[RMDB]
RNA sequence: GGGAACGACUCGAGUAGAGUCGAAAAACUGAAAGCAUAACGAUUAUAACACAAGAGACUGUAAUUGGAUAAGCUCCUCUAGCCGGACUAUGUGAGGAAUAAGCAUUGUGGAAAUUGGAGUGAAGACACGUAAGAAGUGUUUCGACACUUCUUACGUAAAAGAAACAACAACAACAAC
Reactivity to 2A3 in 0.01 (KOAc 150mM, MgCl2 10mM, bicine 150mM(pH8.5), 24C), signal-to-noise 3, nucleotides 027 to 126: a000c050u050g040a090a030a000g010c010a050u060a110a030c000g000a010u070u050a060u110a160a050c040a010c020a090a050g050a020g040a170c030u020g020u090a080a040u060u030g040g030a050u060a100a030g000c020u020c010c010u000c020u020a030g000c010c010g060g050a070c040u000a020u040g050u000g050a160g100g080a130a100u110a060a030g000c020a000u040u050g050u150g060g050a000a060a060u030u050g040g010a020g000u050g010a030a000g040a030c060
Reactivity to DMS in 0.01 (KOAc 150mM, MgCl2 10mM, bicine 150mM(pH8.5), 24C), signal-to-noise 4, nucleotides 027 to 126: a090c030u010g000a080a050a120g020c040a030u000a040a150c080g020a110u010u000a040u000a050a080c080a090c080a060a070g000a110g010a080c090u000g010u000a040a080u000u000g010g010a060u000a070a160g010c060u000c040c020u000c060u000a050g010c040c030g000g000a090c100u000a020u010g000u000g010a050g030g000a080a060u000a060a160g010c020a050u000u000g010u000g010g000a020a040a060u000u000g000g000a090g010u000g010a080a110g000a100c170